[RMDB]
RNA sequence: GGGAACGACUCGAGUAGAGUCGAAAAUUAGGUGAGUCCUUUAAGAAAGUUGCAACCAUACCGUAUAAGGUUUGCAACUCUGUUAAGGAUACUCUGGCUUAUUAUGCUCACAGCGUGUUGUACAGAGGACGAGGAUAGUUCGCUAUCCUCAAAAGAAACAACAACAACAAC
Reactivity to 2A3 in 0.01 (KOAc 150mM, MgCl2 10mM, bicine 150mM(pH8.5), 24C), signal-to-noise 9, nucleotides 027 to 129: u090u030a010g060g010u070g040a010g010u040c000c000u010u000u030a050a030g040a030a170a000g010u020u000g000c000a000a020c010c030a060u150a160c050c070g140u180a120u100a300a100g030g000u060u090u070g010c000a000a000c010u000c000u030g130u090u070a010a000g010g010a010u060a110c010u010c030u040g080g010c010u050u040a030u100u040a100u230g030c000u040c030a110c050a060g090c090g110u060g010u040u020g020u030a050c040a050g080a040g020g070a030c080
Reactivity to DMS in 0.01 (KOAc 150mM, MgCl2 10mM, bicine 150mM(pH8.5), 24C), signal-to-noise 7, nucleotides 027 to 129: u000u010a030g020g010u040g030a010g000u000c040c030u010u010u010a070a040g000a040a050a020g030u010u000g020c010a000a000c040c040a090u050a120c190c230g000u070a230u000a140a130g010g000u030u020u040g000c030a030a010c010u000c050u000g030u000u000a000a000g000g040a000u000a080c020u000c020u020g030g020c090u060u000a010u000u000a070u020g020c010u010c060a040c110a030g030c080g060u040g000u000u010g020u000a020c090a070g010a080g000g000a130c210